Overview: The record gives the reactivity of an RNA of 170 nucleotides to 2A3 and DMS. The DMS profile rests on 19,568 reads. High DMS reactivity at an A or C suggests that its Watson-Crick edge is free. The RNA was probed in 150 mM KOAc, 10 mM MgCl2 and 150 mM bicine (pH 8.5) at 24 C.

[RMDB]
RNA sequence: GGGAACGACUCGAGUAGAGUCGAAAAUUGUAUAAAGAGUGUAGUGCGGCAUCUAGGUGUUACUAAAGGCAUAUUGACAGGCUGUUUUAGUUUUGCCAAGAUGUUAUUUAUGCUUCCACUAGCUUACCACCUUGACCGUUCGCGGUCAAGAAAAGAAACAACAACAACAAC
Reactivity to 2A3 in 0.01 (KOAc 150mM, MgCl2 10mM, bicine 150mM(pH8.5), 24C), signal-to-noise 5, nucleotides 027 to 129: u070u040g050u040a030u070a090a110a010g150a010g010u090g040u070a060g020u030g080c030g020g000c010a000u030c010u020a050g000g010u050g040u050u030a010c000u010a010a000a010g020g000c030a050u060a100u130u150g170a060c110a090g100g030c020u010g120u050u030u020u010a020g020u020u050u020u110g000c000c000a030a000g010a020u030g010u020u030a060u050u140u050a090u160g000c000u090u050c030c000a030c010u000a030g020c010u040u000a020c020c010a020c030
Reactivity to DMS in 0.01 (KOAc 150mM, MgCl2 10mM, bicine 150mM(pH8.5), 24C), signal-to-noise 3, nucleotides 027 to 129: u040u020g020u000a020u030a080a080a110g000a110g020u030g030u020a070g030u020g030c120g000g000c000a050u000c040u050a070g050g020u010g020u000u000a040c060u000a000a000a000g000g030c050a070u020a180u020u010g000a090c180a140g000g000c060u010g030u060u010u050u030a020g010u000u000u000u000g000c000c000a120a030g000a010u000g020u010u020a100u000u000u000a050u040g000c000u000u000c140c050a080c130u030a040g020c040u020u050a100c060c000a060c130